[RMDB]
RNA sequence: GGGAACGACUCGAGUAGAGUCGAAAACCGUAGGAGACCGACGAAGUAUACUUUUGACGCACCCAUUUGAGGUCUCUUCGAAAGAGGAGACCGAGGGUGCGAUAAGUAUACAGAGGUCUCCUAAACGGAAACACUAACUCCUUCGGGAGUUAGUGAACAACGUCAUUCUAUUCGUAGAAUGACGUUGAAAAGAAACAACAACAACAAC
Reactivity to DMS in 0.01 (KOAc 150mM, MgCl2 10mM, bicine 150mM(pH8.5), 24C), signal-to-noise 2, nucleotides 027 to 156: c000c010g020u000a020g010g000a030g030a030c000c000g020a300c140g020a200a300g020u010a020u000a030c000u000u010u000u000g010a140c090g010c000a040c000c000c010a240u010u000u000g000a280g010g030u000c000u000c000u000u000c000g010a190a100a270g010a020g000g020a020g010a000c000c000g030a000g000g000g010u000g000c020g010a000u000a000a010g000u000a010u000a010c010a110g100a270g000g020u000c000u010c000c000u000a020a020a040c030g050g000a110a080a200c020a020c000u000a010a000c000u000c000c000u010u000c300g030g040g030a040g030u000u000a000g000u000g000a060a180
Reactivity to 2A3 in 0.01 (KOAc 150mM, MgCl2 10mM, bicine 150mM(pH8.5), 24C), signal-to-noise 3, nucleotides 027 to 156: c010c000g020u010a000g000g000a010g010a010c000c020g070a150c050g130a300a030g010u000a010u010a000c010u070u110u090u180g170a100c010g000c000a000c000c010c040a200u130u090u300g110a040g000g000u000c000u000c020u000u010c000g060a060a030a010g000a000g010g000a010g000a000c000c000g000a050g000g000g000u010g000c010g000a000u000a000a000g000u000a020u000a000c000a000g000a000g000g000u000c000u000c000c000u000a000a000a000c000g000g050a090a070a000c010a000c010u010a010a000c000u000c000c000u030u080c170g060g000g000a000g000u000u010a010g000u010g000a000a000

Source information
Conditions: 150 mM KOAc, 10 mM MgCl2 and 150 mM bicine (pH 8.5), 24 C. An RNA of 207 nucleotides, treated with DMS and 2A3 and read out base by base. 2A3 adducts were read by reverse transcription with SuperScript II with manganese.